Structure probing data (2A3) for a 207-nucleotide construct. The RNA was probed in 150 mM KOAc, 10 mM MgCl2 and 150 mM bicine (pH 8.5) at 24 C. Source: RMDB library ARCHII, as collected in RNAgym.
RNA sequence: GGGAACGACUCGAGUAGAGUCGAAAACGGCGGGUCUCCCCGCAUUACAGUGUGGUGAACCUGGUCAGGUCCGGAAGGAAGCAGCCACAGCCAAUUAUUGUAAGUGCCGGGGGUUAGGCUCGCCAAUUUAAAACUUGGGUUCGUUCGCGAACCCAAGGCUCAUUGAACGGUUCGCCGUUCAAUGAGCAAAAGAAACAACAACAACAAC
Reactivity to 2A3 in 0.01 (KOAc 150mM, MgCl2 10mM, bicine 150mM(pH8.5), 24C), signal-to-noise 1, nucleotides 027 to 156: c040g000g000c030g010g030g010u000c060u050c000c010c000c000g010c010a010u000u000a000c000a020g030u010g010u080g030g040u050g070a120a030c010c080u030g010g020u040c010a050g000g060u000c000c010g100g140a040a030g000g000a030a140g080c000a000g010c000c000a000c030a020g000c010c000a130a080u240u300a020u050u070g030u000a060a090g220u000g130c150c050g000g020g010g030g000u080u290a000g020g000c000u000c000g010c000c000a000a000u000u000u010a020a040a000a020c000u000u010g000g000g000u120u000c000g030u030u030c160g000c030g080a010a000c000c000c000a000a000g020